[RMDB]
RNA sequence: GGGAACGACUCGAGUAGAGUCGAAAAGAUAUGGAGAGGUCUGGAGCAAGCCUACUGAAUUCGGAAACGAAUUCAAGGUGAUGACCUCCAGAGCCUCUCCUAAGUCAAAGUGCUCUUCGGAGCACAAUCUACACACAAAGUUCGCUUUGUGUGUAGAAAAAGAAACAACAACAACAAC
Reactivity to 2A3 in 0.01 (KOAc 150mM, MgCl2 10mM, bicine 150mM(pH8.5), 24C), signal-to-noise 4, nucleotides 027 to 126: g020a020u090a040u180g000g000a010g000a000g010g010u000c010u000g000g000a020g030c040a110a130g020c030c010u150a260c170u120g010a010a000u000u010c010g030g040a100a070a080c000g000a020a000u010u010c010a010a040g000g000u030g060a300u150g040a040c000c000u000c000c000a000g000a040g070c010c000u000c000u000c000c000u000a020a000g000u010c010a030a060a120g000u010g000c000u010c010u070u180c300g190g000a000g000c000a000c000a000a000
Reactivity to DMS in 0.01 (KOAc 150mM, MgCl2 10mM, bicine 150mM(pH8.5), 24C), signal-to-noise 5, nucleotides 027 to 126: g010a080u010a300u000g010g000a020g000a000g020g000u000c000u000g010g000a030g010c040a080a210g010c000c000u000a150c300u000g000a010a000u000u000c020g000g000a100a110a260c010g000a020a000u000u000c000a020a000g010g010u000g010a070u000g010a120c300c010u000c000c010a000g000a070g010c010c000u010c000u000c000c010u000a010a060g000u000c040a090a130a090g000u000g000c000u000c010u010u020c220g040g000a010g010c000a000c000a030a060
Source: RMDB library TTRDES, as collected in RNAgym. An RNA of 177 nucleotides, treated with 2A3 and DMS and read out base by base. The DMS profile rests on 4,825 reads. For DMS the reverse transcriptase was MarathonRT. The 2A3 profile rests on 8,051 reads.